[RMDB]
RNA sequence: GGGAACGACUCGAGUAGAGUCGAAAAUCUACCAUUACCACACCCACACACAGAUAUUACGGCUAAUGUUUAUUAGUCAAGUUUCCAUGAGCUCACUCUUUAUUCUUUUUCUCGUUUUCUUAUACCUUUAGAUGUUUUUGUUCGCAAAAACAUCUAAAAAAGAAACAACAACAACAAC
Reactivity to DMS in 0.01 (KOAc 150mM, MgCl2 10mM, bicine 150mM(pH8.5), 24C), signal-to-noise 2, nucleotides 027 to 126: u000c040u000a100c060c020a110u030u020a090c040c010a050c060a070c020c010c040a030c090a040c070a030c060a030g010a060u020a050u030u000a080c150g000g000c000u000a000a010u000g020u010u020u010a020u010u010a020g000u000c030a080a100g020u000u000u000c010c010a090u000g020a130g010c010u010c040a030c050u000c030u000u010u010a030u000u000c010u010u000u020u000u000c010u010c030g010u020u000u000u000c040u020u010a100u020a100c170c050u000
Reactivity to 2A3 in 0.01 (KOAc 150mM, MgCl2 10mM, bicine 150mM(pH8.5), 24C), signal-to-noise 8, nucleotides 027 to 126: u010c010u030a080c000c000a050u030u110a070c020c020a030c000a010c030c010c010a020c010a000c000a000c000a030g090a060u100a040u140u180a080c050g000g000c000u010a020a010u030g090u220u200u220a050u020u010a010g020u010c020a040a070g030u020u090u000c020c020a020u060g030a010g020c010u020c030a030c010u020c000u030u070u060a100u100u090c010u030u100u030u070u020c030u000c030g050u010u040u090u010c020u020u070a100u070a200c010c010u030

The data come from the RNA Mapping Database (RMDB), libraries RFM100 and RFMREP. The record gives the reactivity of an RNA of 177 nucleotides to DMS and 2A3. The RNA was probed in 150 mM KOAc, 10 mM MgCl2 and 150 mM bicine (pH 8.5) at 24 C. Values cover nucleotides 27 to 126.